[RMDB]
RNA sequence: GGGAACGACUCGAGUAGAGUCGAAAACUGGCCACUAUCUAGCUAUGACCACGUUGCUCCUGGAGAUGAGCACGCCCUUUACCUGCGUUUCCUGGAUGCUCUUAAAGGUAAGUGCAUGCAUCAGCAGAAGAUGACAUGUGCCUCACGCAUUUAAUCAUCUGUUAAAAUUGUUCGCAAUUUUAACAGAAAAAGAAACAACAACAACAAC
Reactivity to DMS in 0.01 (KOAc 150mM, MgCl2 10mM, bicine 150mM(pH8.5), 24C), signal-to-noise 2, nucleotides 027 to 156: c080u000g040g010c020c000a130c080u000a080u000c080u000a110g010c020u010a040u010g020a070c020c030a070c300g020u000u010g020c040u000c030c020u020g030g010a090g010a070u010g000a130g020c010a040c000g040c000c020c020u000u000u000a100c070c000u000g020c030g020u000u010u000c020c040u020g000g000a160u000g030c060u000c110u000u000a000a070a060g030g000u000a030a110g020u000g020c010a030u000g000c040a050u000c030a100g040c090a220g000a160a240g010a040u010g000a120c020a040u000g020u000g010c000c000u000c050a080c060g030c020a130u000u000u000a060a090u000c070a180
Reactivity to 2A3 in 0.01 (KOAc 150mM, MgCl2 10mM, bicine 150mM(pH8.5), 24C), signal-to-noise 5, nucleotides 027 to 156: c030u020g020g000c000c030a050c070u090a100u120c030u060a020g080c030u050a070u160g040a080c020c000a050c090g100u100u080g000c000u010c010c030u050g070g040a070g030a090u080g020a010g030c010a020c010g030c010c000c000u070u110u090a090c020c030u050g020c030g050u000u060u080c010c000u020g060g010a060u060g020c010u010c000u090u150a100a060a000g080g000u020a080a040g040u000g030c000a000u010g000c000a010u020c010a030g140c020a040g050a160a020g010a080u010g020a090c000a010u020g000u000g020c000c000u030c010a060c030g020c010a040u070u100u160a070a050u180c050a020